Background:
Chemical mapping of a 177-nucleotide RNA with DMS and 2A3. For 2A3, 3,258 sequencing reads were counted. For 2A3 the reverse transcriptase was SuperScript II with manganese. For DMS, 1,247 sequencing reads were counted. The RNA was probed in 150 mM KOAc, 10 mM MgCl2 and 150 mM bicine (pH 8.5) at 24 C.

RNA sequence: GGGAACGACUCGAGUAGAGUCGAAAAGAUAUGGACCACUCCCCACCCUCGAAGGACUGAUGACCUCGGAAACGAGCAAGGUCCUAAGAGGAGGUGGUCCUAAGUCAAACCGUUCUUCGGAACGGAAGUUCUAUUGCUGGUUCGCCAGCAAUAGAACAAAAGAAACAACAACAACAAC
Reactivity to DMS in 0.01 (KOAc 150mM, MgCl2 10mM, bicine 150mM(pH8.5), 24C), signal-to-noise 2, nucleotides 027 to 126: g020a060u020a200u000g020g000a000c000c000a020c030u000c300c010c020c040a300c060c000c000u000c000g000a300a030g000g010a020c000u000g000a130u060g010a090c300c000u020c020g010g000a040a050a260c000g000a000g030c040a100a160g000g000u000c000c000u000a000a300g010a040g050g000a020g000g000u000g000g020u010c000c000u000a040a030g010u000c070a050a050a080c000c010g000u000u010c000u000u010c210g010g000a000a010c000g000g040a040a030
Reactivity to 2A3 in 0.01 (KOAc 150mM, MgCl2 10mM, bicine 150mM(pH8.5), 24C), signal-to-noise 2, nucleotides 027 to 126: g050a090u170a120u180g000g010a000c000c020a020c060u090c060c020c010c000a040c000c000c010u000c000g000a050a000g020g000a010c010u030g050a190u150g060a190c020c010u020c000g030g040a030a030a040c000g020a000g000c020a060a110g010g000u000c000c000u010a020a000g010a000g000g010a000g000g000u000g000g020u020c000c010u010a050a010g070u050c070a060a070a140c020c010g040u010u020c030u080u110c260g150g000a030a000c010g010g000a030a030